Source: RMDB library OK2TST, as collected in RNAgym. This 177-nucleotide RNA was probed chemically with DMS and 2A3. The 2A3 profile rests on 14,792 reads. In probing experiments dimethyl sulfate is read out at A N1 and C N3, which are open when not base-paired. The DMS profile rests on 16,240 reads. The reactions ran in a buffer of 150 mM KOAc, 10 mM MgCl2 and 150 mM bicine (pH 8.5), at 24 C.
[RMDB]
RNA sequence: GGGAACGACUCGAGUAGAGUCGAAAACGGUGGUGAUGACCACAAAGCGGUGGAUGUAGACGGUGAAUUACUCAAUCCUUGAACAUACGAUACCGUUACAGUUUGUUCGCACGCUUGACCGCUUGGCAUCCUUCUUCCUUUUCGAAGGAAGAAGGAUAAAAGAAACAACAACAACAAC
Reactivity to DMS in 0.01 (KOAc 150mM, MgCl2 10mM, bicine 150mM(pH8.5), 24C), signal-to-noise 9, nucleotides 027 to 126: c130g020g030u000g010g010u000g010a150u010g010a100c010c000a030c040a040a030a020g030c010g010g020u000g020g020a040u000g010u000a130g010a040c030g000g010u000g010a150a130u000u000a090c130u020c140a120a090u000c030c030u000u000g010a020a030c030a030u000a020c040g010a300u010a050c010c010g000u000u000a030c040a300g000u000u010u000g010u000u000c010g020c300a090c200g010c040u000u000g000a120c010c010g000c020u000u000g010g010c070
Reactivity to 2A3 in 0.01 (KOAc 150mM, MgCl2 10mM, bicine 150mM(pH8.5), 24C), signal-to-noise 7, nucleotides 027 to 126: c040g050g010u030g000g020u080g090a300u210g150a120c000c000a010c030a020a010a000g020c020g040g010u050g030g040a050u070g030u160a030g020a060c020g000g030u070g100a210a140u170u110a130c060u050c160a050a090u050c030c000u030u110g010a020a000c010a020u080a040c010g030a030u070a090c010c000g000u000u020a020c020a030g010u010u040u050g020u010u010c020g010c040a070c120g010c000u020u030g010a010c000c000g000c000u010u010g000g000c010